[RMDB]
RNA sequence: GGGAACGACUCGAGUAGAGUCGAAAAAUUACUAAGACUGCCUCUGGGUGACAUGAGAUGAAAUGACUCAUUCUUCCAGCACCCAGCUGUCAUGUCAUUCUGUUAGAGAGCUUGAUCUUUGUAGGGGACGUACCGAAGCAUUCGUGCUUCGGUACGUAAAAGAAACAACAACAACAAC
Reactivity to DMS in 0.01 (KOAc 150mM, MgCl2 10mM, bicine 150mM(pH8.5), 24C), signal-to-noise 2, nucleotides 027 to 126: a100u000u010a050c060u000a070a020g010a030c000u000g010c040c010u010c010u000g000g040g010u000g000a040c060a030u000g000a070g020a070u000g000a050a160a100u010g010a160c160u010c030a100u000u010c060u010u020c130c020a040g030c000a040c010c010c020a120g000c140u000g000u000c010a010u000g010u000c010a050u010u000c060u000g020u000u010a080g000a060g000a110g010c010u000u010g010a100u000c010u000u000u000g000u000a050g010g000g000g010
Reactivity to 2A3 in 0.01 (KOAc 150mM, MgCl2 10mM, bicine 150mM(pH8.5), 24C), signal-to-noise 1, nucleotides 027 to 126: a000u050u030a020c000u000a010a010g040a000c010u030g010c010c000u120c030u050g030g000g010u000g000a050c060a070u070g000a070g020a050u020g070a020a080a100u260g060a070c050u000c040a030u150u000c000u080u030c050c010a010g020c000a030c020c050c010a020g000c020u020g020u020c010a020u120g000u020c020a020u150u010c040u040g150u180u100a020g000a010g000a010g030c010u090u070g050a120u110c020u020u030u090g000u010a030g000g000g000g000